[RMDB]
RNA sequence: GGGAACGACUCGAGUAGAGUCGAAAAGCGCGUAGGUUCAGAUGAUGGGCCCGCAUCUGUACGAAAGCAAGACGAAAGUCCAGCCUACGUGCAUGAGCACGCGGGCCCCGUGCUCUACUGCAAAAGAGAGCCAUCAUCCAUUCGUGGAUGAUGGCUCAAAAGAAACAACAACAACAAC
Reactivity to 2A3 in 0.01 (KOAc 150mM, MgCl2 10mM, bicine 150mM(pH8.5), 24C), signal-to-noise 1, nucleotides 027 to 126: g010c010g020c000g000u000a000g010g040u010u100c000a050g000a030u060g000a010u080g050g020g000c000c010c000g000c000a000u020c010u050g090u110a200c210g140a210a070a000g060c040a040a000g050a000c000g040a120a000a040g000u010c000c010a000g000c000c000u000a000c000g000u030g000c000a000u050g010a000g080c030a000c000g040c040g020g000g000c000c000c000c000g000u000g000c000u000c000u060a100c030u080g180c000a070a100a060a000g120a040
The data come from the RNA Mapping Database (RMDB), library OK1LIB. The record gives the reactivity of an RNA of 177 nucleotides to 2A3. High 2A3 reactivity points to a flexible backbone, as in loops and unpaired stretches. Reactivities are given for positions 27 through 126.